[RMDB]
RNA sequence: GGGAACGACUCGAGUAGAGUCGAAAAACUCGCACCACCACGGAGAGCGGAAAGUUGAUAACAGAUUGGUGCUGCAGGAGUUGCACCUUACCACCAUUGCGCUACCAGACAGACAGCGGCUGUUGGUAUGGCAUGGAGAUUAGACCACAGAGACAUGCAUUAUGAAGUCCUUCGGGACUUCAUAAUGAAAAGAAACAACAACAACAAC
Reactivity to 2A3 in 0.01 (KOAc 150mM, MgCl2 10mM, bicine 150mM(pH8.5), 24C), signal-to-noise 5, nucleotides 027 to 156: a010c030u020c010g000c000a030c010c010a040c010c020a030c060g070g020a090g020a040g100c050g060g080a090a100a030g090u100u090g080a140u080a190a040c040a050g080a130u090u100g000g000u010g020c040u060g020c040a030g020g180a080g050u050u020g020c020a040c010c000u020u070a080c030c040a030c010c000a030u050u200g040c100g030c030u020a030c010c020a060g100a160c010a010g040a050c020a070g100c050g150g020c020u010g000u010u000g030g000u020a090u150g040g000c020a010u020g030g000a030g010a030u080u090a020g060a050c010c000a030c040a090g040a010g020a060c040a070u120g000
Reactivity to DMS in 0.01 (KOAc 150mM, MgCl2 10mM, bicine 150mM(pH8.5), 24C), signal-to-noise 3, nucleotides 027 to 156: a050c010u010c030g030c060a110c040c020a090c040c030a090c080g030g000a140g010a080g030c000g030g020a070a050a070g020u000u000g010a120u020a090a120c060a080g020a120u000u000g010g020u000g020c030u000g000c070a150g010g020a110g030u000u000g020c040a080c030c040u010u020a050c050c020a190c000c020a050u000u010g050c040g010c030u000a040c000c000a150g020a060c040a060g020a130c030a130g020c100g040g000c010u000g020u000u010g020g000u000a030u010g000g000c030a050u010g020g000a130g010a090u000u000a070g000a090c020c000a100c020a070g000a110g020a080c060a090u010g020
Chemical mapping of a 207-nucleotide RNA with 2A3 and DMS. Reactivities are given for positions 27 through 156. High 2A3 reactivity points to a flexible backbone, as in loops and unpaired stretches. Reactivities are rounded to 0.1 and cut off at 0 and 3.